Notes
Conditions: 150 mM KOAc, 10 mM MgCl2 and 150 mM bicine (pH 8.5), 24 C. The record gives the reactivity of an RNA of 177 nucleotides to 2A3.
[RMDB]
RNA sequence: GGGAACGACUCGAGUAGAGUCGAAAACGGCAUUUCAACGCUGAAUGCACAUGCGAAGUUUUUUGUGAAGCUUCUUGUCUGAUGCACAUUUUAUUAAGGAUCUGCAGUGGUGGAAUGCUCAGAUCGAGGCGCUGCUAAAUUUCGAUUUAGCAGCGCCAAAAGAAACAACAACAACAAC
Reactivity to 2A3 in 0.01 (KOAc 150mM, MgCl2 10mM, bicine 150mM(pH8.5), 24C), signal-to-noise 2, nucleotides 027 to 126: c000g000g000c000a000u010u010u000c030a040a030c040g000c000u050g110a030a030u100g000c000a000c000a090u050g070c000g000a000a000g000u040u000u090u090u210u210g300u300g040a000a000g000c000u000u030c030u000u010g090u000c060u120g140a210u060g000c000a030c000a140u000u080u080u000a290u030u190a150a030g110g000a110u110c040u150g000c000a000g000u000g020g070u050g000g000a000a000u000g000c010u000c000a050g000a080u130c060g040a000
Background
It was measured as part of the RMDB library OK1LIB. For 2A3, 488 sequencing reads were counted.